[RMDB]
Chemical mapping of a 177-nucleotide RNA with 2A3 and DMS.
2A3 adducts were read by reverse transcription with SuperScript II with manganese.
For 2A3, 802 sequencing reads were counted.
RNA sequence: GGGAACGACUCGAGUAGAGUCGAAAAUGUAUUUCCCCAGAUGCCAUCCUACAUGUUCACAUUGAAGAGAUAAGCCUCUCAGAAGGAAGAUAACCAUAGAAAGUUGAAAAGAGAAACCUCUUUAGAUCACUAGUGCGAAAUUCGUUUCGCACUAGUGAAAAGAAACAACAACAACAAC
Reactivity to 2A3 in 0.01 (KOAc 150mM, MgCl2 10mM, bicine 150mM(pH8.5), 24C), signal-to-noise 2, nucleotides 027 to 126: u190g020u030a080u020u040u050c000c010c040c010a000g000a040u110g000c040c000a010u030c010c000u060a060c020a060u020g010u160u220c070a030c020a080u150u160g120a160a000g050a010g000a020u070a240a050g040c000c030u030c000u010c000a020g000a100a030g120g000a000a000g000a110u080a050a050c000c000a000u000a060g160a120a100a040g030u110u090g120a070a000a040a000g100a000g040a100a260a090c010c000u030c040u020u000u050a060g060a030u050
Reactivity to DMS in 0.01 (KOAc 150mM, MgCl2 10mM, bicine 150mM(pH8.5), 24C), signal-to-noise 1, nucleotides 027 to 126: u030g000u010a190u000u000u010c000c000c040c220a090g000a030u000g000c000c030a040u000c030c030u030a070c030a020u000g000u030u000c110a180c020a130u000u000g030a030a070g010a090g070a090u000a120a090g000c090c000u000c030u060c100a010g060a100a270g000g000a090a020g000a180u050a000a040c070c000a130u000a180g000a060a000a000g000u010u000g000a000a040a130a000g000a060g000a090a140a130c240c000u000c000u000u000u000a050g070a300u030